[RMDB]
RNA sequence: GGGAACGACUCGAGUAGAGUCGAAAAGUCCCCAGUAUGACGUUAAACUGCUGACUCAUACAUACUGACACCGGUUGCUCAACAGGCUGUGUGGGACAAUAGAAUAACAAGGCUCUCAAUUUGAGCUAAAACUCCUCGGGGUUCGCCCCGAGGAGAACACCAUAGAGGACUUCGGUCCUCUAUGGUGAAAAGAAACAACAACAACAAC
Reactivity to 2A3 in 0.01 (KOAc 150mM, MgCl2 10mM, bicine 150mM(pH8.5), 24C), signal-to-noise 1, nucleotides 027 to 156: g060u040c040c000c030c010a030g010u030a050u150g000a000c030g020u030u070a030a130a080c030u070g000c050u060g030a030c000u000c030a010u050a060c000a000u090a030c040u070g070a050c020a000c060c070g190g000u110u130g050c000u070c090a060a060c040a080g050g000c030u000g020u000g020u010g070g000g030a000c010a000a050u040a140g180a040a070u090a050a050c080a160a000g080g000c000u030c000u020c090a100a250u060u060u240g030a020g000c000u030a000a120a000a120c000u000c000c000u000c000g000g000g030g000u040u150c170g050c000c000c000c000g010a000g000g000a000g000a000a000
Notes
This 207-nucleotide RNA was probed chemically with 2A3. Source: RMDB library M2RFPK, as collected in RNAgym.